[RMDB]
RNA sequence: GGGAACGACUCGAGUAGAGUCGAAAAAGCCAUACCAUUACGAUGGUAUGGCAAGUCCGUGAUGGCGAUGGAUCCCGCCUGGCCGAUGCCGAACUGCCGAUCUGGCUGAUGGUUCCUGCCCCGUCAAAAAACGUAAAGCACUUCGGUGCUUUACGAACUCGAACAUUAAGUUCGCUUAAUGUUCGAGAAAAGAAACAACAACAACAAC
Reactivity to 2A3 in 0.01 (KOAc 150mM, MgCl2 10mM, bicine 150mM(pH8.5), 24C), signal-to-noise 4, nucleotides 027 to 156: a000g000c000c000a000u000a000c000c000a020u050u040a050c270g110a010u020g000g000u000a000u010g000g000c000a000a000g020u000c000c010g030u080g030a090u070g010g020c060g040a020u040g010g010a030u040c000c010c010g010c040c010u030g020g000c030c040g090a080u160g060c030c030g080a140a070c090u120g010c030c030g090a150u080c070u110g010g000c010u030g020a100u100g010g000u010u040c010c000u010g020c000c020c000c000g070u050c040a030a050a010a030a040a060c000g000u000a000a000a010g000c000a000c010u020u080c200g070g000u000g000c000u000u000u000a000c000g000a000a000
Reactivity to DMS in 0.01 (KOAc 150mM, MgCl2 10mM, bicine 150mM(pH8.5), 24C), signal-to-noise 1, nucleotides 027 to 156: a120g030c000c000a020u000a030c000c000a010u000u000a110c270g030a130u010g010g000u000a030u000g030g000c020a000a030g010u000c020c040g060u000g010a100u000g020g000c010g040a110u000g020g010a050u000c020c020c060g020c000c000u000g030g000c020c060g000a150u010g020c010c040g020a080a080c090u000g000c030c000g000a100u000c030u020g040g020c020u020g010a140u000g020g000u010u000c020c020u000g030c040c000c000c010g030u000c010a000a060a030a100a110a130c000g050u000a010a010a010g010c000a020c010u000u020c300g000g060u000g030c000u000u020u000a010c000g000a040a050
Structure probing data (2A3 and DMS) for a 207-nucleotide construct. The DMS profile rests on 3,278 reads.